The record gives the reactivity of an RNA of 177 nucleotides to 2A3. The data come from the RNA Mapping Database (RMDB), library OK1LIB. Conditions: 150 mM KOAc, 10 mM MgCl2 and 150 mM bicine (pH 8.5), 24 C.
[RMDB]
RNA sequence: GGGAACGACUCGAGUAGAGUCGAAAAGCGUCCAGCACAGACGCGGCGCUCUUCAGCGAGGCCGUCUGCCGUGCCGCCUCCUCCGCAUCGAUGUGAAUGCCGGCCUUCUCGAUGCUCGCCAUCGCAAGGCUCCGAGUAGCUUCGGCUACUCGGAGCCAAAAGAAACAACAACAACAAC
Reactivity to 2A3 in 0.01 (KOAc 150mM, MgCl2 10mM, bicine 150mM(pH8.5), 24C), signal-to-noise 1, nucleotides 027 to 126: g000c010g090u050c000c000a040g120c080a010c040a040g070a000c040g000c000g080g000c210g040c000u000c030u130u150c030a070g030c070g080a090g010g000c030c000g010u010c010u030g000c000c060g000u020g020c000c050g030c000c000u080c000c000u150c010c000g000c000a070u030c000g030a080u040g040u010g120a160a020u180g060c000c000g110g000c030c010u100u000c000u010c000g140a100u070g070c040u040c050g010c030c110a050u140c020g000c120a050a060